The record gives the reactivity of an RNA of 207 nucleotides to 2A3 and DMS. For DMS the reverse transcriptase was MarathonRT.
RNA sequence: GGGAACGACUCGAGUAGAGUCGAAAAAAAAACAUUAUGCUCACGACCAAUGCAGGUGCCAAGUGACAUCACAUAGCGCUCGCGUAGGGGAUCGAUUGGCGGGUUAGUCACUUGCGCAAAUUGUUGACGGAAGUAGUCAUACAAGGUGCGAGUUUGAUGCCACUUAAAAUUUCGAUUUUAAGUGGCAAAAAGAAACAACAACAACAAC
Reactivity to 2A3 in 0.01 (KOAc 150mM, MgCl2 10mM, bicine 150mM(pH8.5), 24C), signal-to-noise 2, nucleotides 027 to 156: a000a000a000a000a000c150a120u190u110a060u080g040c010u040c040a050c030g090a030c070c000a050a050u090g040c040a010g030g020u030g010c020c000a030a000g000u000g020a000c010a060u120c080a050c010a060u180a070g090c100g000c010u040c010g010c010g070u110a140g010g000g060g040a040u100c020g040a160u080u020g030g000c060g020g040g040u040u040a000g000u000c000a000c000u000u010g010c010g000c010a040a060a020u080u010g000u000u030g030a060c130g010g000a060a010g030u130a040g040u100c040a000u070a110c070a040a040g040g030u050g020c010g110a050g030u000u000u040g070a030
Reactivity to DMS in 0.01 (KOAc 150mM, MgCl2 10mM, bicine 150mM(pH8.5), 24C), signal-to-noise 1, nucleotides 027 to 156: a040a080a030a000a020c050a120u010u020a150u010g010c030u000c040a120c030g000a190c030c010a070a070u010g000c030a030g070g020u000g010c030c010a070a100g000u000g030a050c060a130u000c110a060c060a090u000a130g020c050g000c040u010c050g060c050g040u000a100g000g010g030g020a130u010c060g000a120u000u000g020g050c000g020g040g020u000u000a050g000u000c000a040c020u000u000g020c050g010c030a020a050a050u000u000g010u000u000g000a070c080g000g000a090a140g000u010a080g010u010c060a040u000a090c080a010a120g000g020u000g010c010g000a040g000u000u000u000g000a160